RNA sequence: GGGAACGACUCGAGUAGAGUCGAAAAUCCGACUCUCAUAGGCUCUCCAACCCAACUCCUACUCAAUACGUGCUCGUCGUACAGAACGGUAACAUGUUUUCCGAACAUCCGCGCUUGGGUAUACGAGAAAGGCGUAGAUUAUUCGUAAUCUACGCAAUAAUCGAAAGGAGUUCGCUCCUUUCGAUUAAAAAGAAACAACAACAACAAC
Reactivity to DMS in 0.01 (KOAc 150mM, MgCl2 10mM, bicine 150mM(pH8.5), 24C), signal-to-noise 2, nucleotides 027 to 156: u000c030c030g010a110c010u010c010u000c010a140u010a120g010g000c030u000c010u000c040c030a050a080c040c040c020a070a130c040u000c010c020u000a030c030u000c020a070a060u000a070c010g000u000g000c010u000c000g000u000c030g030u000a170c070a120g020a050a110c030g000g000u020a070a090c090a110u010g010u000u000u000u010c070c070g000a110a060c020a060u000c070c020g040c030g020c110u000u010g000g010g020u010a120u010a080c000g000a120g000a090a110a100g010g010c000g020u000a020g020a040u000u000a080u000u000c280g030u000a020a030u000c000u000a000c000g020c010a040a010
Reactivity to 2A3 in 0.01 (KOAc 150mM, MgCl2 10mM, bicine 150mM(pH8.5), 24C), signal-to-noise 3, nucleotides 027 to 156: u090c020c010g030a010c010u040c010u030c050a110u090a140g080g000c010u010c010u000c040c020a040a060c030c000c000a040a070c010u020c040c020u040a070c020u030c080a060a050u070a150c040g010u050g000c020u020c050g050u010c010g000u070a050c030a060g090a090a010c010g000g020u060a080a020c030a110u090g030u020u060u040u070c060c030g000a010a020c020a040u060c020c000g040c010g000c080u040u030g020g000g020u100a050u020a070c050g010a020g070a070a080a010g120g000c000g000u000a000g000a010u000u020a020u040u050c100g030u030a010a000u000c000u000a000c000g000c000a000a000